[RMDB]
RNA sequence: GGGAACGACUCGAGUAGAGUCGAAAAGCCGUGCUCGAGAGGGAGCAGAAAAUGCAGAGCUAUGCCGUCGUUUCGCUAAACAAAUGCGAAACGACAAAUUGCGUUACAUACGCAAUCCUCUAAUGAACAGCACGUAAUUGUUCGCAAUUACGUGCUGAAAAGAAACAACAACAACAAC
Reactivity to DMS in 0.01 (KOAc 150mM, MgCl2 10mM, bicine 150mM(pH8.5), 24C), signal-to-noise 2, nucleotides 027 to 126: g010c000c040g040u010g000c020u000c020g000a020g040a030g010g000g000a020g010c000a070g000a060a030a160a080u020g020c020a020g000a190g030c090u010a070u010g030c060c200g010u000c000g000u010u000u020c000g000c000u000a060a050a140c300a060a040a110u000g000c010g010a000a010a000c000g000a000c000a000a020a040u000u000g000c000g020u000u010a110c270a150u010a010c020g000c000a010a020u010c010c010u000c000u020a130a110u030g000a080a170
Reactivity to 2A3 in 0.01 (KOAc 150mM, MgCl2 10mM, bicine 150mM(pH8.5), 24C), signal-to-noise 3, nucleotides 027 to 126: g070c010c020g050u020g000c010u010c050g060a030g000a010g030g050g000a040g000c010a020g150a010a200a010a010u130g010c030a030g010a040g160c090u090a080u100g060c040c040g000u000c000g000u000u000u000c010g000c030u030a090a270a130c050a050a110a010u100g000c000g010a000a000a000c000g000a000c000a000a020a000u000u030g000c000g040u010u050a170c080a080u160a030c030g020c010a010a010u040c010c020u030c010u050a120a160u130g060a080a030

Annotation:
Source: RMDB library M2PK90, as collected in RNAgym. Structure probing data (DMS and 2A3) for a 177-nucleotide construct. The 2A3 profile rests on 2,502 reads. The reactions ran in a buffer of 150 mM KOAc, 10 mM MgCl2 and 150 mM bicine (pH 8.5), at 24 C. For DMS, 1,287 sequencing reads were counted. DMS adducts were read by reverse transcription with MarathonRT.